[RMDB]
RNA sequence: GGGAACGACUCGAGUAGAGUCGAAAAACUACGAAGAAGUUCCGGGAGUUACGAAGGAAGCUUCGAGCUCAUAUUGGUCAUGGGUUGAGAACGGGAAUGGAACUCUAUGAGAUCGAAUCUCCCGUUGAAUAGACAUAGGCUUCGGCCUAUGUCUAUUAAAAGAAACAACAACAACAAC
Reactivity to 2A3 in 0.01 (KOAc 150mM, MgCl2 10mM, bicine 150mM(pH8.5), 24C), signal-to-noise 2, nucleotides 027 to 126: a000c120u140a130c020g010a030a030g030a030a000g000u010u000c000c010g080g120g000a050g030u200u120a230c020g010a020a030g030g020a090a050g140c000u000u020c000g020a040g000c000u010c000a090u170a140u190u300g130g000u020c030a030u000g100g000g000u000u180g020a000g000a120a020c020g000g000g000a070a050u010g060g120a110a080c000u000c000u060a140u300g000a020g020a060u090c060g000a110a040u030c120u000c070c010c000g000u040u090g000
Reactivity to DMS in 0.01 (KOAc 150mM, MgCl2 10mM, bicine 150mM(pH8.5), 24C), signal-to-noise 3, nucleotides 027 to 126: a050c010u020a070c060g000a110a080g010a040a300g000u000u010c000c010g020g010g030a060g000u000u000a080c040g030a080a020g000g010a100a120g030c010u000u000c010g000a090g010c010u010c000a090u020a060u040u020g000g010u020c030a100u030g000g000g010u000u010g010a070g020a030a020c010g010g000g000a050a030u010g030g010a040a040c030u000c000u060a080u060g010a110g010a050u010c020g010a160a070u020c110u000c000c010c000g010u000u010g000

Annotation
The record gives the reactivity of an RNA of 177 nucleotides to 2A3 and DMS. DMS adducts were read by reverse transcription with MarathonRT. 2A3 adducts were read by reverse transcription with SuperScript II with manganese. For 2A3, 482 sequencing reads were counted. Values cover nucleotides 27 to 126.